[RMDB]
RNA sequence: GGGAACGACUCGAGUAGAGUCGAAAAGCUCUAGGAGACUAGAGCGAUACGUUAGAGUGCUCGUGGCAUGACUAACGGAUAGCCAGGUACGAGGUUGCCAGAGGACAUAGCUAUAGCUAUGUCCAAAGUCCUAUCAUACCUUCGGGUAUGAUAGGACAAAAGAAACAACAACAACAAC
Reactivity to 2A3 in 0.01 (KOAc 150mM, MgCl2 10mM, bicine 150mM(pH8.5), 24C), signal-to-noise 1, nucleotides 027 to 126: g010c000u000c000u000a000g000g070a030g060a080c000u000a000g000a000g000c000g000a000u010a030c000g000u000u000a000g000a000g000u000g010c000u010c090g130u290g080g000c000a000u030g230a200c000u000a000a000c000g000g050a010u000a000g070c030c000a150g000g000u010a020c040g060a050g200g050u190u020g030c000c010a030g000a100g010g000a000c000a000u000a000g000c030u140a040u030a300g010c010u010a000u040g010u060c040c000a000a000a000
Reactivity to DMS in 0.01 (KOAc 150mM, MgCl2 10mM, bicine 150mM(pH8.5), 24C), signal-to-noise 3, nucleotides 027 to 126: g030c000u000c000u000a000g020g000a220g000a170c000u000a000g000a000g050c010g000a010u000a010c020g000u010u000a020g010a300g000u000g000c000u000c180g000u040g010g030c000a000u000g000a080c020u020a000a020c010g040g000a100u000a010g000c000c020a080g000g000u010a070c110g000a080g000g000u010u000g000c040c030a050g010a160g000g010a020c000a000u000a000g010c000u020a190u030a190g050c000u000a000u000g000u000c000c000a010a000a070

An RNA of 177 nucleotides, treated with 2A3 and DMS and read out base by base. DMS (dimethyl sulfate) methylates the pairing face of unpaired adenines and cytosines. 2A3 adducts were read by reverse transcription with SuperScript II with manganese. The RNA was probed in 150 mM KOAc, 10 mM MgCl2 and 150 mM bicine (pH 8.5) at 24 C. The 2A3 profile rests on 732 reads. It was measured as part of the RMDB library OK1LIB.